[RMDB]
RNA sequence: GGGAACGACUCGAGUAGAGUCGAAAAUAGAGAAAAAGGCUUUGAAAUUAUGGUUUCUUAUAGACGAGUUAUUUCCUUCUAUGGGAAAUAGAGUGUAUAAUAUUAUAUCCAUGCUUGAGCCUUUGACGUUGCCUCUAAUAUUCGUAUUAGAGGCAACAAAAGAAACAACAACAACAAC
Reactivity to 2A3 in 0.01 (KOAc 150mM, MgCl2 10mM, bicine 150mM(pH8.5), 24C), signal-to-noise 1, nucleotides 027 to 126: u080a030g100a000g000a040a010a060a060a060g030g000c000u000u080u140g090a090a150a070u160u020a030u050g000g010u000u090u090c030u100u040a040u030a010g100a050c030g000a000g090u030u000a000u060u030u000c030c000u120u120c090u180a250u250g000g030g000a000a010a010u040a000g020a020g060u030g010u000a010u020a030a060u030a010u170u180a090u030a040u250c000c010a030u000g020c020u000u050g000a000g050c000c060u000u030u000g080a060c080
Reactivity to DMS in 0.01 (KOAc 150mM, MgCl2 10mM, bicine 150mM(pH8.5), 24C), signal-to-noise 2, nucleotides 027 to 126: u000a180g000a210g010a050a100a030a010a010g010g000c000u000u000u000g010a060a100a060u000u000a020u000g010g000u000u010u000c070u010u020a010u000a030g000a020c030g010a200g010u010u000a000u000u000u000c000c000u000u000c290u020a100u010g000g010g000a000a000a000u000a010g000a200g010u010g000u000a010u010a030a030u010a100u000u010a070u010a050u000c000c010a000u000g000c200u000u010g020a020g000c000c000u000u000u000g000a150c130